[RMDB]
RNA sequence: GGGAACGACUCGAGUAGAGUCGAAAACAUGGAGUCUUCGGACUCCAUGCACUACCGAAAUAAUGCCUCGGUAAAAAAGGCAAACCCUUGGAAACAAGGGAACGAUGUCACGAUUCGUCGUGACAAAUCAAUAAGUACUGUUCGCAGUACUUAUUGAAAAAGAAACAACAACAACAAC
Reactivity to DMS in 0.01 (KOAc 150mM, MgCl2 10mM, bicine 150mM(pH8.5), 24C), signal-to-noise 9, nucleotides 027 to 126: c000a000u000g000g000a020g020u000c000u000u010c210g040g010a010c000u000c000c000a000u000g000c070a180c040u000a060c000c000g000a070a110a110u000a110a110u000g000c000c000u000c020g000g010u000a000a030a040a050a040a020g000g010c010a030a080a200c010c000c000u000u000g000g000a160a110a180c000a000a000g000g000g010a060a030c190g010a150u000g000u010c000a010c000g000a030u000u010c190g010u000c000g020u000g000a000c000a020a040a090
Reactivity to 2A3 in 0.01 (KOAc 150mM, MgCl2 10mM, bicine 150mM(pH8.5), 24C), signal-to-noise 9, nucleotides 027 to 126: c000a010u000g000g000a010g000u010c020u060u090c290g100g000a000c000u000c000c000a000u000g000c000a030c020u030a010c000c000g030a010a020a060u150a040a050u040g000c000c000u000c010g000g000u060a040a050a000a010a010a020g010g000c000a020a030a190c000c000c000u000u000g010g010a040a030a020c000a010a010g000g000g020a000a010c030g080a060u100g000u000c000a000c010g010a010u040u050c190g040u010c000g000u110g000a000c000a000a010a000
An RNA of 177 nucleotides, treated with DMS and 2A3 and read out base by base. The RNA was probed in 150 mM KOAc, 10 mM MgCl2 and 150 mM bicine (pH 8.5) at 24 C.